[RMDB]
RNA sequence: GGGAACGACUCGAGUAGAGUCGAAAACCUAUCCAAAAUGAGAUCCCAUCUUGCACACUGUGCUAAUUUGAGAUUCUCAUGCCUUCUACUUGGAGAGAUCUGGACUAGAAGUCAGGGCAUCUGACUCAAUACAUUCGUCAGUUCGCUGACGAAUGAACCCACUUGCUUUCUUCGGAAAGCAAGUGGGAAAAGAAACAACAACAACAAC
Reactivity to 2A3 in 0.01 (KOAc 150mM, MgCl2 10mM, bicine 150mM(pH8.5), 24C), signal-to-noise 2, nucleotides 027 to 156: c000c000u010a050u020c040c010a060a050a040a080u030g000a000g000a010u010c010c000c000a010u020c000u010u000g040c030a000c020a060c160u250g000u000g020c030u190a000a070u030u020u000g050a050g000a010u280u040c000u000c000a000u000g000c040c000u120u110c080u150a240c060u060u160g000g000a010g000a010g000a050u050c050u070g030g010a030c020u060a060g040a120a000g110u020c000a000g060g050g160c090a090u080c060u010g000a020c000u010c010a000a120u070a150c010a020u010u000c000g000u000c010a020g000u000u100c170g010c130u000g010a000c000g000a000a010u000g000a000a000
About this RNA:
An RNA of 207 nucleotides, treated with 2A3 and read out base by base. The 2A3 profile rests on 1,035 reads. For 2A3 the reverse transcriptase was SuperScript II with manganese. It was measured as part of the RMDB library M2RFPK.